[RMDB]
RNA sequence: GGGAACGACUCGAGUAGAGUCGAAAACAGUGGGAAUAGGAGCUGUACUCCUUGGGUUCUUGGGAGCAGCAGGAAGCACUAUGGGCGCAGCGUCAUUGACGCUGACGGUACAGGCCAGACUAUUAUUACAAACUCAAUGAUUCGUCAUUGAGUUUGUAAAAGAAACAACAACAACAAC
Reactivity to 2A3 in 0.01 (KOAc 150mM, MgCl2 10mM, bicine 150mM(pH8.5), 24C), signal-to-noise 4, nucleotides 027 to 126: c070a010g040u100g000g020g100a070a110u070a150g040g010a020g020c050u060g040u100a100c020u010c000c000u030u070g060g020g000u120u090c030u050u080g000g040g000a040g000c010a000g000c000a010g040g020a030a040g030c040a010c100u080a150u110g030g000g060c040g000c000a000g000c010g010u020c070a300u020u300g000a010c010g000c000u000g000a030c010g010g000u040a010c000a000g010g040c040c020a030g000a010c030u060a040u300u000a050u010u050
Reactivity to DMS in 0.01 (KOAc 150mM, MgCl2 10mM, bicine 150mM(pH8.5), 24C), signal-to-noise 3, nucleotides 027 to 126: c080a090g010u020g000g020g010a070a060u020a060g010g020a150g000c070u010g010u010a260c040u000c000c000u000u010g010g000g000u010u020c060u000u010g000g000g010a060g020c090a040g010c040a050g000g010a090a050g010c080a080c070u000a090u010g010g000g020c090g010c010a020g000c020g000u010c000a190u010u010g010a020c000g000c010u000g010a010c060g030g000u010a050c090a030g010g010c040c030a090g020a160c140u030a100u010u020a130u000u030

An RNA of 177 nucleotides, treated with 2A3 and DMS and read out base by base. The reactions ran in a buffer of 150 mM KOAc, 10 mM MgCl2 and 150 mM bicine (pH 8.5), at 24 C.